[RMDB]
RNA sequence: GGGAACGACUCGAGUAGAGUCGAAAAGGGCAACAGCCCGGCCUCAGCGAGGUCCCCUCGGGAGGUGCCUUCCGCGUCACGGAGUGCCGUGACCGGGGGUAACCCUGGCCGGGCACAGGCCCACCUGGCGUUUGCAGUUGUUCGCAACUGCAAACGCAAAAGAAACAACAACAACAAC
Reactivity to 2A3 in 0.01 (KOAc 150mM, MgCl2 10mM, bicine 150mM(pH8.5), 24C), signal-to-noise 2, nucleotides 027 to 126: g020g010g000c010a060a030c020a080g030c000c000c000g000g040c030c010u060c020a010g050c030g020a000g030g110u210c000c020c020c040u040c000g020g020g030a080g010g000u010g000c000c000u300u300c000c000g000c170g000u020c010a000c010g060g000a230g140u280g280c000c010g000u000g000a000c000c000g000g000g000g000g000u020a050a050c000c020c000u000g000g000c000c010g000g000g000c030a000c000a000g020g000c000c000c000a000c000c000u040g050